[RMDB]
RNA sequence: GGGAACGACUCGAGUAGAGUCGAAAAAUCAACACCAACGGCAGUUGGCACAUCAAUAGCACGGCCUUGAACUGCAAUGAAAGCCUUAACACCGGCUGGUUAGCAGGGCUCUUCUAUCAGCACAAAUUCAACUCUUCAGGCUGUCCUGAGAGGUUGGGUUAUAUAAAUAGUUCGCUAUUUAUAUAACAAAAGAAACAACAACAACAAC
Reactivity to DMS in 0.01 (KOAc 150mM, MgCl2 10mM, bicine 150mM(pH8.5), 24C), signal-to-noise 3, nucleotides 027 to 156: a120u010c020a060a070c060a120c020c000a030a040c050g030g000c130a110g020u000u010g020g000c010a090c060a170u000c080a050a110u000a070g010c070a060c020g010g000c010c020u000u000g000a050a100c040u020g030c030a070a060u000g010a070a060a050g000c010c000u000u000a100a090c060a050c030c040g020g030c040u000g010g030u000u000a110g020c070a080g020g010g000c000u000c040u000u000c030u000a090u000c040a060g020c040a110c080a050a090a180u000u000c010a010a030c000u020c000u000u000c010a010g020g020c050u000g010u000c030c010u000g010a070g000a030g010g010u000u000g010g000
Reactivity to 2A3 in 0.01 (KOAc 150mM, MgCl2 10mM, bicine 150mM(pH8.5), 24C), signal-to-noise 6, nucleotides 027 to 156: a010u090c030a030a060c040a010c050c000a020a040c020g050g000c050a050g020u090u070g030g030c030a030c030a130u200c090a120a140u040a100g030c070a030c080g040g000c030c000u000u030g040a070a040c010u030g000c020a020a040u100g040a070a030a020g010c010c010u110u100a140a040c050a040c090c020g180g000c110u080g020g040u090u060a040g040c060a020g020g020g000c000u020c030u140u020c020u080a120u250c040a030g040c050a010c030a070a100a030u150u100c010a030a040c020u040c010u240u110c020a020g020g030c110u160g100u190c000c010u010g010a020g000a020g050g040u010u010g030g010